[RMDB]
Source: RMDB library OK2TRN, as collected in RNAgym. Chemical mapping of a 177-nucleotide RNA with 2A3 and DMS. 2A3 adducts were read by reverse transcription with SuperScript II with manganese. DMS adducts were read by reverse transcription with MarathonRT. In probing experiments dimethyl sulfate is read out at A N1 and C N3, which are open when not base-paired.
RNA sequence: GGGAACGACUCGAGUAGAGUCGAAAACUAGCUGGUGAGAGGAGAUGAAUUGAACGUCCCAAAUUCCUUCUCAUCUUGGGACAUGUUCUGGCCAGUGGGUGACUACUCCCCCAAAUCCGGUUAGACCAUGGUCUAGGCUAUUCGUAGCCUAGACCAUAAAAGAAACAACAACAACAAC
Reactivity to 2A3 in 0.01 (KOAc 150mM, MgCl2 10mM, bicine 150mM(pH8.5), 24C), signal-to-noise 2, nucleotides 027 to 126: c000u020a000g040c020u010g010g000u100g020a120g000a050g020g030a030g010a130u180g030a120a230u210u090g020a040a040c010g010u010c010c000c000a000a010a020u100u040c030c000u190u050c060u030c020a080u000c050u010u030g000g000g010a030c030a060u120g020u000u010c020u060g000g040c000c000a130g100u160g030g050g040u030g040a040c070u090a070c010u080c020c040c000c000c040a080a170a000u000c030c030g000g000u000u030a020g020a010c000c000
Reactivity to DMS in 0.01 (KOAc 150mM, MgCl2 10mM, bicine 150mM(pH8.5), 24C), signal-to-noise 2, nucleotides 027 to 126: c010u000a120g010c020u000g010g020u000g020a100g020a060g010g010a040g010a130u000g010a060a110u010u010g000a010a110c140g000u010c010c010c000a040a010a070u000u010c060c080u010u000c010u000c050a100u020c090u000u010g010g030g010a080c050a090u010g020u000u000c010u000g020g020c000c030a120g020u000g000g030g000u010g010a070c100u010a120c040u000c010c000c010c000c020a090a080a090u010c020c050g010g000u000u000a050g000a210c070c040